[RMDB]
RNA sequence: GGGAACGACUCGAGUAGAGUCGAAAAAGCCUGCAGAUGCGAUGGAGCCGGCAGAAGCAGUGCAGGGGGACGAAUGCGCAGCGUCGGGCUCGCCAGCCUGGCAGCAGAAGAGCAGGGAGAAGCAGGCGUUGUUACGCCAGUUCGCUGGCGUAACAACAAAAGAAACAACAACAACAAC
Reactivity to DMS in 0.01 (KOAc 150mM, MgCl2 10mM, bicine 150mM(pH8.5), 24C), signal-to-noise 1, nucleotides 027 to 126: a110g000c040c010u000g030c040a040g000a160u020g000c050g000a090u000g030g020a070g000c000c030g010g010c050a110g020a100a250g000c010a080g070u000g010c040a030g000g000g020g000g000a090c120g000a070a110u000g010c060g000c050a140g000c040g000u000c000g000g000g020c000u000c090g000c210c040a180g000c000c040u010g030g060c000a060g030c090a050g000a120a060g000a130g040c050a070g020g020g000a070g000a080a080g020c060a040g030g020c090
Chemical mapping of a 177-nucleotide RNA with DMS. For DMS the reverse transcriptase was MarathonRT. For DMS, 916 sequencing reads were counted. Conditions: 150 mM KOAc, 10 mM MgCl2 and 150 mM bicine (pH 8.5), 24 C. Reactivities are given for positions 27 through 126.